[RMDB]
RNA sequence: GGGAACGACUCGAGUAGAGUCGAAAAGGCUGGUGACAAGGCCGAGCAGAAGCUAACACAGCUGCCCUACAAGCUGUCUUGUACAACCGAAUUGGAGAUAUUGGCCUCAUCCUAAGCAUAGCAUGACCCUCCUAUUGCAGUUCGCUGCAAUAGGAGGAAAAGAAACAACAACAACAAC
Reactivity to 2A3 in 0.01 (KOAc 150mM, MgCl2 10mM, bicine 150mM(pH8.5), 24C), signal-to-noise 2, nucleotides 027 to 126: g030g010c020u020g000g070u070g040a030c010a070a060g010g000c040c000g010a010g000c040a010g020a190a000g000c040u100a210a010c100a000c020a180g050c000u050g020c010c000c040u110a100c100a090a000g000c010u030g020u020c030u050u030g010u050a090c020a130a070c100c040g090a140a160u140u090g130g050a110g030a050u110a080u120u100g040g000c000c000u000c020a080u020c010c020u060a030a040g060c030a080u090a080g080c020a050u120g040a150c000
Reactivity to DMS in 0.01 (KOAc 150mM, MgCl2 10mM, bicine 150mM(pH8.5), 24C), signal-to-noise 3, nucleotides 027 to 126: g000g040c020u000g020g040u010g020a050c070a040a120g000g010c040c070g020a110g000c040a030g000a080a060g020c040u000a100a050c200a100c130a030g010c020u000g000c070c060c080u020a130c120a080a040g020c110u020g000u000c020u000u000g000u000a040c090a110a040c030c020g000a110a180u000u010g000g020a110g010a100u000a080u000u020g010g010c010c020u000c130a090u010c010c020u010a070a070g010c070a050u020a080g030c080a140u000g000a170c170
About this RNA: This 177-nucleotide RNA was probed chemically with 2A3 and DMS. DMS adducts were read by reverse transcription with MarathonRT.